[RMDB]
RNA sequence: GGGAACGACUCGAGUAGAGUCGAAAAGAAGAGAGUCGACGCAAGCGACGAUAACUGCGGAACGGUAACCGUAGUACCGUACGGUCAUGGCACGCGAAAGCGAAAGAGCGCAACAUGCCAUAAGAGAAUCAGUCGUAGCUUUCGAGCUACGACUGAUAAAAGAAACAACAACAACAAC
Reactivity to 2A3 in 0.01 (KOAc 150mM, MgCl2 10mM, bicine 150mM(pH8.5), 24C), signal-to-noise 2, nucleotides 027 to 126: g080a050a010g130a000g040a020g070u100c090g060a100c000g030c060a040a020g100c040g040a010c040g030a040u120a130a050c000u020g010c050g040g030a070a040c120g030g020u040a120a030c000c060g000u030a040g010u020a020c060c000g000u070a070c000g000g000u060c010a040u040g040g000c010a050c030g020c060g050a100a000a000g060c070g070a060a120a000g110a040g030c020g000c010a000a040c010a080u060g000c000c000a060u090a030a040g080a010g060a040
Reactivity to DMS in 0.01 (KOAc 150mM, MgCl2 10mM, bicine 150mM(pH8.5), 24C), signal-to-noise 2, nucleotides 027 to 126: g000a140a140g000a130g000a190g020u000c020g040a070c130g000c130a060a150g050c020g020a060c120g010a000u040a060a000c040u000g020c000g040g000a250a100c080g000g000u000a020a140c070c050g030u000a050g050u010a020c000c010g000u020a000c120g000g000u000c110a050u000g000g010c000a110c030g000c050g020a030a120a150g000c010g020a110a160a090g010a130g000c020g000c070a070a080c160a080u000g000c000c000a020u010a080a120g000a120g030a150

An RNA of 177 nucleotides, treated with 2A3 and DMS and read out base by base. It was measured as part of the RMDB library OK1LIB. High 2A3 reactivity points to a flexible backbone, as in loops and unpaired stretches.